Structure probing data (DMS and 2A3) for a 207-nucleotide construct.
For DMS the reverse transcriptase was MarathonRT.
Conditions: 150 mM KOAc, 10 mM MgCl2 and 150 mM bicine (pH 8.5), 24 C.
High DMS reactivity at an A or C suggests that its Watson-Crick edge is free.
2A3 adducts were read by reverse transcription with SuperScript II with manganese.

RNA sequence: GGGAACGACUCGAGUAGAGUCGAAAACGAAGGAAAGCUUGACCAUCUAAUCUUCUGCAACGCCAUUACGAGGACUGCCCUUAGAGGCUCAUGGCGAUAGGUCACCCCGCCGGUCGGUCAGCUGCUUAUACCCGUGCACGGUUCGCCGUGCACGGAAGUAUUACAUCAUGUUCGCAUGAUGUAAUACAAAAGAAACAACAACAACAAC
Reactivity to DMS in 0.01 (KOAc 150mM, MgCl2 10mM, bicine 150mM(pH8.5), 24C), signal-to-noise 3, nucleotides 027 to 156: c070g010a160a050g010g010a090a070a050g010c030u000u010g010a080c040c020a140u000c070u000a100a140u000c030u000u000c040u000g030c020a130a090c020g010c040c000a060u000u000a120c060g010a090g030g000a070c080u000g000c050c000c010u000u000a120g010a160g020g030c020u000c060a050u000g000g020c010g010a090u010a040g010g020u010c050a120c010c030c020c020g050c040c030g020g020u000c020g000g010u010c030a090g010c000u000g000c000u000u000a170u000a160c080c000c000g000u010g010c000a010c000g030g010u010u010c300g030c020c010g040u000g000c000a000c000g020g000a000a050
Reactivity to 2A3 in 0.01 (KOAc 150mM, MgCl2 10mM, bicine 150mM(pH8.5), 24C), signal-to-noise 5, nucleotides 027 to 156: c060g030a020a020g080g060a200a070a010g020c020u160u170g030a000c000c020a040u040c040u100a140a050u020c070u160u040c050u150g070c040a090a050c030g010c010c010a010u070u150a050c110g060a060g070g070a070c120u110g010c000c000c020u070u130a080g040a130g080g000c010u010c030a020u010g000g000c000g050a060u080a050g030g010u050c030a100c020c010c000c010g010c020c010g040g070u080c030g000g010u010c020a020g010c030u030g000c010u110u070a070u080a200c000c010c010g000u000g000c010a000c000g010g060u050u050c160g020c050c000g000u000g000c000a000c000g000g000a000a000